[RMDB]
RNA sequence: GGGAACGACUCGAGUAGAGUCGAAAAACAAAUUACAUUUAACAGUUAAGUAUUUAUUUCCUACAGUUAGGCAAUAUAAUGAUAAAAGAUUGUACUAAAUCGUAUAAUAACAGUGAGGAGAGUGGUGAUCUAGUGUUUGUUUCGACAAACACUAGAUAAAAGAAACAACAACAACAAC
Reactivity to DMS in 0.01 (KOAc 150mM, MgCl2 10mM, bicine 150mM(pH8.5), 24C), signal-to-noise 5, nucleotides 027 to 126: a080c080a050a060a070u020u000a030c030a060u000u000u000a070a110c070a080g010u000u010a080a160g000u000a020u000u000u000a050u010u000u000c010c000u000a060c170a120g010u010u010a010g010g010c030a010a010u000a030u000a040a050u010g000a120u000a060a090a090a120g000a030u000u000g010u000a100c140u010a040a050a040u000c080g010u000a030u000a040a040u010a050a050c100a040g020u000g010a070g010g010a080g010a050g020u000g000g000u000g000
Reactivity to 2A3 in 0.01 (KOAc 150mM, MgCl2 10mM, bicine 150mM(pH8.5), 24C), signal-to-noise 3, nucleotides 027 to 126: a000c040a040a120a030u170u170a030c020a010u120u160u150a160a030c020a030g030u050u080a110a020g010u050a080u010u050u000a020u000u030u070c000c000u020a040c000a060g070u140u070a010g010g000c000a010a000u040a000u030a070a100u140g070a030u090a130a110a010a040g060a030u000u020g000u060a180c020u060a050a050a050u060c030g020u060a040u010a150a040u030a030a040c030a030g040u030g060a030g070g000a030g000a000g000u110g050g070u060g010